[RMDB]
RNA sequence: GGGAACGACUCGAGUAGAGUCGAAAAAAUGCCAGCGGGAAGGCUACCAUGUGGAGAGCUGGUCUCUGUUUGGGCAGGACUAAGAGACGCAGGGCAGCCUUGGGCAACCUGUCUACUCUCACUCACAAAAUGACGUAGUGUUCGCACUACGUCAUUUAAAAGAAACAACAACAACAAC
Reactivity to 2A3 in 0.01 (KOAc 150mM, MgCl2 10mM, bicine 150mM(pH8.5), 24C), signal-to-noise 1, nucleotides 027 to 126: a010a000u130g030c040c010a050g040c080g040g060g090a000a000g030g000c010u010a020c000c000a050u030g010u030g000g030a060g010a030g070c020u040g030g000u010c040u000c000u030g150u030u220u120g160g190g020c020a040g020g000a000c000u040a040a000g010a000g000a010c000g070c030a000g000g020g000c010a000g000c000c000u010u070g050g040g020c010a060a000c010c030u030g050u050c020u040a100c010u000c020u010c030a000c070u050c070a040c030a040
Reactivity to DMS in 0.01 (KOAc 150mM, MgCl2 10mM, bicine 150mM(pH8.5), 24C), signal-to-noise 2, nucleotides 027 to 126: a080a050u000g000c020c020a090g000c060g020g010g000a060a020g000g000c000u000a030c010c010a060u010g010u000g000g000a020g010a030g010c010u000g000g000u000c000u020c020u000g020u000u000u030g020g010g020c020a010g010g000a060c020u000a030a010g000a030g000a030c030g010c010a030g010g000g010c030a040g000c000c000u000u010g020g010g000c040a090a110c040c020u020g000u000c040u000a060c050u000c000u000c060a110c090u000c080a130c170a110